This 177-nucleotide RNA was probed chemically with DMS.
DMS adducts were read by reverse transcription with MarathonRT.
The RNA was probed in 150 mM KOAc, 10 mM MgCl2 and 150 mM bicine (pH 8.5) at 24 C.
High DMS reactivity at an A or C suggests that its Watson-Crick edge is free.
For DMS, 2,090 sequencing reads were counted.
The data come from the RNA Mapping Database (RMDB), library TTRDEL.
[RMDB]
RNA sequence: GGGAACGACUCGAGUAGAGUCGAAAAGAUAUGGAAUCGAUAUGCAAGGAAUUCGGAAACGAAUUUCUGAUGACCAUAAUGAUUCCUAAGUCAAAGCCAAGCGGGGGGUUCGCCCCCCGCUUGGCAAGAUAAUCCUCUAGUUCGCUAGAGGAUUAUCAAAAGAAACAACAACAACAAC
Reactivity to DMS in 0.01 (KOAc 150mM, MgCl2 10mM, bicine 150mM(pH8.5), 24C), signal-to-noise 3, nucleotides 027 to 126: g000a020u020a220u000g000g010a010a010u010c000g010a150u010a010u000g010c040a070a040g010g010a010a010u000u000c010g010g010a070a060a200c000g010a010a000u000u000u010c000u010g000a110u010g010a150c300c010a010u010a020a110u010g000a010u000u000c010c000u000a060a130g000u000c010a080a140a170g030c000c000a020a010g000c000g030g040g010g010g040g040u000u010c190g000c040c000c030c000c000c000g000c010u000u000g000g010c000a020a000